[RMDB]
RNA sequence: GGGAACGACUCGAGUAGAGUCGAAAAAGCAUAGGGCUAGCCCAUGACCUCCUUAAAGUAUGUCACCUGCACAGAGACAGCAUGGCCUUAAUACUUCACUGAGUGAGUCAGACACAAGGCCCUAGCCUGAGUGGGAGGAUACAGGGACAGAACCCUAGGUAAUUUAGUGCUUCGGCACUAAAUUACCAAAAGAAACAACAACAACAAC
Reactivity to 2A3 in 0.01 (KOAc 150mM, MgCl2 10mM, bicine 150mM(pH8.5), 24C), signal-to-noise 2, nucleotides 027 to 156: a010g150c110a120u100a100g020g010g040c040u040a010g020c060c040c010a070u070g030a030c000c000u030c030c000u220u290a120a230a000g040u050a170u070g070u020c010a040c040c040u110g070c110a050c010a090g180a020g040a090c000a000g050c010a030u020g000g000c000c000u030u070a100a000u060a140c050u060u210c080a050c100u100g090a000g160u160g010a010g150u070c030a010g030a180c030a010c050a140a000g000g000c010c020c000u030a010g010c000c040u060g010a030g000u130g010g010g000a010g000g010a000u010a000c010a000g030g000g030a010c000a000g040a100a090c000c030c000u000a060
Structure probing data (2A3) for a 207-nucleotide construct. For 2A3 the reverse transcriptase was SuperScript II with manganese.